[RMDB]
Structure probing data (DMS) for a 177-nucleotide construct. Values cover nucleotides 27 to 126. Conditions: 150 mM KOAc, 10 mM MgCl2 and 150 mM bicine (pH 8.5), 24 C. DMS adducts were read by reverse transcription with MarathonRT.
RNA sequence: GGGAACGACUCGAGUAGAGUCGAAAAGAUAUGGACGUAGAGCGAUAAGCCUAAUGUCGGAAACGACAUAGGCUUUUGACGCUCGAGGUCCUAAGUCGAGAUCUUGAAUGGUUCGCCAUUCAAGAAACGCUCUUCGUUUCUUCGGAAACGAAGAGCGAAAAGAAACAACAACAACAAC
Reactivity to DMS in 0.01 (KOAc 150mM, MgCl2 10mM, bicine 150mM(pH8.5), 24C), signal-to-noise 1, nucleotides 027 to 126: g000a010u000a300u000g000g010a030c000g000u010a300g000a000g010c000g050a180u010a010a030g020c000c010u000a040a100u000g000u000c030g000g000a030a020a130c000g000a010c000a020u000a020g000g010c010u010u010u010u010g080a130c050g050c000u000c000g010a180g000g010u000c000c000u000a010a070g000u000c010g010a210g000a130u000c070u000u010g000a000a000u000g000g000u000u030c190g010c040c000a000u000u010c000a000a010g000a020a110a110